[RMDB]
RNA sequence: GGGAACGACUCGAGUAGAGUCGAAAAUCUGAUCCAUGGACACGGUACAGUACACUAGAUGAUGAUCGGUACUGAUCUACGUGCGUACGAUCCGCUAGCGUGCUAUCUAGUACUAGGUACAUAGUACUCGCUGAGACUGGUUCGCCAGUCUCAGCGAAAAAGAAACAACAACAACAAC
Reactivity to DMS in 0.01 (KOAc 150mM, MgCl2 10mM, bicine 150mM(pH8.5), 24C), signal-to-noise 2, nucleotides 027 to 126: u000c070u000g020a120u040c050c070a080u000g000g000a020c030a060c020g010g000u000a050c070a040g040u000a010c010a030c000u000a040g000a010u010g020a190u000g010a070u030c000g050g000u010a040c010u000g000a090u030c120u020a100c170g030u000g000c110g020u010a080c040g000a010u010c020c020g030c010u000a010g000c020g030u000g030c020u020a080u000c210u010a120g000u000a010c010u000a070g000g020u000a030c080a020u000a050g000u000a060c070
Reactivity to 2A3 in 0.01 (KOAc 150mM, MgCl2 10mM, bicine 150mM(pH8.5), 24C), signal-to-noise 2, nucleotides 027 to 126: u030c000u030g030a010u070c020c000a030u050g060g020a050c040a000c070g060g000u030a040c040a030g000u000a000c010a000c020u120a060g100a300u140g010a120u070g010a000u030c030g080g030u000a020c000u120g050a040u030c000u070a050c130g050u050g060c030g000u060a000c010g000a010u000c000c020g020c030u000a020g040c000g010u040g000c000u020a060u140c040u050a050g020u040a030c040u000a030g140g130u030a040c010a070u060a020g040u010a080c020
Chemical mapping of a 177-nucleotide RNA with DMS and 2A3. Conditions: 150 mM KOAc, 10 mM MgCl2 and 150 mM bicine (pH 8.5), 24 C. For DMS, 1,278 sequencing reads were counted.